Chemical mapping of a 177-nucleotide RNA with 2A3 and DMS. The 2A3 profile rests on 8,073 reads. The reactions ran in a buffer of 150 mM KOAc, 10 mM MgCl2 and 150 mM bicine (pH 8.5), at 24 C. 2A3 adducts were read by reverse transcription with SuperScript II with manganese. For DMS, 9,880 sequencing reads were counted.

RNA sequence: GGGAACGACUCGAGUAGAGUCGAAAACUUGGCAAAGUAAGAGCCACAGCUCAGAUGUGGUGUCAGGAAUAGCACUGGGAGCUGAGAAAGAAAAACCACAUUCAGACAAAGUAGAUGUCAGUUAAGAUCAUCCAAAAUGAUUCGUCAUUUUGGAUGAAAAAGAAACAACAACAACAAC
Reactivity to 2A3 in 0.01 (KOAc 150mM, MgCl2 10mM, bicine 150mM(pH8.5), 24C), signal-to-noise 6, nucleotides 027 to 126: c000u040u070g010g000c030a040a070a170g110u210a120a040g060a020g110c000c000a020c010a010g000c010u010c020a040g010a150u060g020u020g020g020u020g020u030c020a020g030g160a180a140u160a140g040c060a040c100u030g050g010g040a020g000c020u030g030a020g090a100a090a030g080a010a040a010a000a000c020c000a010c010a020u100u080c050a020g040a040c030a030a160a020g030u070a080g070a090u060g030u020c030a020g030u090u050a070a030g040a090
Reactivity to DMS in 0.01 (KOAc 150mM, MgCl2 10mM, bicine 150mM(pH8.5), 24C), signal-to-noise 8, nucleotides 027 to 126: c050u000u000g010g020c030a090a090a140g030u010a110a110g020a220g010c010c020a100c040a040g010c030u000c050a150g010a080u000g030u000g010g010u000g020u000c030a050g010g010a120a110u010a100g010c090a070c020u000g010g000g010a030g020c010u000g010a100g010a050a070a080g000a030a040a040a080a040c010c020a020c050a060u010u010c090a110g000a050c040a050a060a120g010u010a090g010a120u000g000u000c020a070g010u000u010a070a090g000a170